An RNA of 207 nucleotides, treated with 2A3 and DMS and read out base by base. For DMS, 2,894 sequencing reads were counted. 2A3 is a SHAPE reagent: it acylates the 2'-hydroxyl of flexible nucleotides of all four kinds. Source: RMDB library OK3TST, as collected in RNAgym. The 2A3 profile rests on 1,437 reads. The RNA was probed in 150 mM KOAc, 10 mM MgCl2 and 150 mM bicine (pH 8.5) at 24 C. DMS adducts were read by reverse transcription with MarathonRT.

RNA sequence: GGGAACGACUCGAGUAGAGUCGAAAAUUAAACAAACUAUUCAGCAUUGUAGAUAACAGAGUUGGAAAGAAUAAUAUCUUCACUACCAACUUUAGUGAUAAAGAACUUAAUCAAAACAUGAAUUGGCAAAGGAUCAAUUCGAGAAUGAAACAUAACAAUCCCAUAAAAUGUUCGCAUUUUAUGGGAUAAAAGAAACAACAACAACAAC
Reactivity to 2A3 in 0.01 (KOAc 150mM, MgCl2 10mM, bicine 150mM(pH8.5), 24C), signal-to-noise 2, nucleotides 027 to 156: u090u020a050a010a030c070a070a070a000c060u110a050u090u080c020a030g030c020a030u070u080g060u060a040g020a100u000a060a020c010a000g040a000g000u000u000g000g010a100a050a020g030a020a000u130a120a050u050a070u040c060u060u060c050a030c040u110a070c010c000a010a030c000u050u020u030a040g000u020g070a050u090a060a170a020g040a050a020c010u040u060a020a020u080c030a010a000a000a150c010a040u070g030a000a000u000u000g000g000c040a110a090a090g060g000a020u030c040a000a020u010u020c040g030a020g020a050a030u090g020a030a000a030c060a000u160a070a000c040a100
Reactivity to DMS in 0.01 (KOAc 150mM, MgCl2 10mM, bicine 150mM(pH8.5), 24C), signal-to-noise 2, nucleotides 027 to 156: u000u000a040a050a150c020a130a130a050c080u000a140u000u000c100a090g010c020a140u010u000g000u020a120g010a130u000a120a070c000a100g000a040g000u000u000g020g000a070a140a070g000a080a110u020a140a140u000a020u020c030u000u000c020a030c090u010a300c010c000a030a030c010u010u000u010a050g040u000g000a110u000a030a050a180g010a120a040c030u000u000a060a010u000c080a040a040a060a110c050a060u000g010a120a060u000u010g050g000c100a150a080a100g010g000a090u000c020a040a060u010u000c000g010a060g010a050a050u000g000a140a050a080c020a030u000a040a060c040a120